[RMDB]
RNA sequence: GGGAACGACUCGAGUAGAGUCGAAAAAGUUGAACGCAUAAUUACUUUACAGUUAAGUAUAUUGCGUGUGUCAUUAGAUCCUUCAUUAGGCAUAUCAACUACAAACACAAAUGAGUAAUGGCACGGCUCGAGGCACAUCUUGGGUAAAUCCGUAGGACGCUAAGGAGAUAUUCGUAUCUCCUUAGCGAAAAGAAACAACAACAACAAC
Reactivity to DMS in 0.01 (KOAc 150mM, MgCl2 10mM, bicine 150mM(pH8.5), 24C), signal-to-noise 3, nucleotides 027 to 156: a060g000u000u000g000a080a120c010g030c010a050u000a120a130u000u010a020c010u000u000u010a230c170a300g010u010u000a020a010g030u000a030u010a110u010u000g010c040g000u000g010u000g030u000c030a070u010u000a110g000a120u010c020c020u000u000c090a120u000u010a100g030g010c090a050u000a110u010c090a030a090c000u030a220c140a090a090a130c110a160c080a030a120a060u000g000a100g030u010a030a070u000g000g000c040a060c080g020g030c020u000c010g000a070g020g010c090a050c100a040u000c060u000u000g030g000g030u000a030a040a060u020c020c030g010u000a090g060g000a250
Reactivity to 2A3 in 0.01 (KOAc 150mM, MgCl2 10mM, bicine 150mM(pH8.5), 24C), signal-to-noise 4, nucleotides 027 to 156: a010g040u020u040g020a040a010c010g000c010a020u020a050a070u200u020a050c050u090u060u100a190c160a140g080u130u150a050a010g010u000a030u000a010u050u060g000c000g000u040g010u000g010u010c000a000u020u090a050g080a200u090c030c000u040u060c060a150u120u110a060g020g000c030a050u040a030u170c020a040a040c010u160a080c070a050a230a000c050a000c030a080a130a070u160g000a040g050u050a060a020u030g020g000c030a020c040g020g010c010u040c030g010a040g010g000c060a010c010a150u040c060u050u030g030g000g020u110a080a090a060u040c020c010g030u030a030g030g040a020

Structure probing data (DMS and 2A3) for a 207-nucleotide construct. The reactions ran in a buffer of 150 mM KOAc, 10 mM MgCl2 and 150 mM bicine (pH 8.5), at 24 C. DMS adducts were read by reverse transcription with MarathonRT.